The data come from the RNA Mapping Database (RMDB), library OK1LIB. An RNA of 177 nucleotides, treated with 2A3 and read out base by base. Reactivities are rounded to 0.1 and cut off at 0 and 3.
[RMDB]
RNA sequence: GGGAACGACUCGAGUAGAGUCGAAAAGGGAGGGCUGGGGCGGUGGUGUGUGACAGGAGCGGCGUGUUGCGCUGGGGGACGUCUGGAGGAGCGGGGGGUGCGCGGUGACGUGUGGAUGAGGAACAGGCUCCCAUCCAACAUUCGUGUUGGAUGGGAGAAAAGAAACAACAACAACAAC
Reactivity to 2A3 in 0.01 (KOAc 150mM, MgCl2 10mM, bicine 150mM(pH8.5), 24C), signal-to-noise 1, nucleotides 027 to 126: g060g060g250a250g000g020g000c060u210g000g000g000g060c000g000g000u010g050g000u120g000u010g080u000g020a070c070a110g050g120a190g060c000g010g000c060g020u070g210u000u130g020c240g000c080u000g040g000g000g050g020a000c000g020u000c000u020g040g020a050g040g040a020g140c090g000g150g000g000g000g030u150g150c050g080c000g080g000u000g000a080c020g000u000g160u140g000g000a140u020g000a020g000g000a030a020c000a010g070g050